[RMDB]
This 177-nucleotide RNA was probed chemically with 2A3 and DMS. DMS adducts were read by reverse transcription with MarathonRT. Conditions: 150 mM KOAc, 10 mM MgCl2 and 150 mM bicine (pH 8.5), 24 C. Values cover nucleotides 27 to 126. For 2A3 the reverse transcriptase was SuperScript II with manganese.

RNA sequence: GGGAACGACUCGAGUAGAGUCGAAAAGAGAAUUGUUUAUAUCAUUAAAAGCGGGCCAAGCAUGGUUUGAACUGUGAUUGCUCCCCAAAUUGGAGGAUAAACAUUCUUUAAAGACAUUUCUUUGGGAACCUUCGUAAGGGUUCGCCCUUACGAAGGUAAAAGAAACAACAACAACAAC
Reactivity to 2A3 in 0.01 (KOAc 150mM, MgCl2 10mM, bicine 150mM(pH8.5), 24C), signal-to-noise 3, nucleotides 027 to 126: g020a010g030a050a070u190u050g010u010u000u020a100u020a020u040c030a040u070u230a010a000a050a020g070c140g000g000g020c080c010a000a010g000c040a040u000g070g000u100u200u300g150a100a080c000u000g000u000g000a010u000u030g000c050u290c000c000c000c010a040a040a040u110u030g070g020a030g040g020a010u000a000a000a000c000a000u000u000c000u020u090u000a090a120a000g090a010c010a040u020u010u000c020u010u020u020g050g030g140a060
Reactivity to DMS in 0.01 (KOAc 150mM, MgCl2 10mM, bicine 150mM(pH8.5), 24C), signal-to-noise 2, nucleotides 027 to 126: g000a010g010a020a000u030u000g000u010u000u010a010u000a090u030c000a020u010u020a090a070a060a070g020c300g050g040g010c300c030a000a030g000c010a010u000g010g010u000u010u050g000a080a050c030u000g020u010g010a030u000u000g040c100u030c230c000c010c030a000a300a180u000u000g010g030a070g010g030a000u000a000a000a010c000a000u000u010c010u000u010u000a080a000a080g010a060c140a030u010u040u010c000u000u020u000g000g010g010a070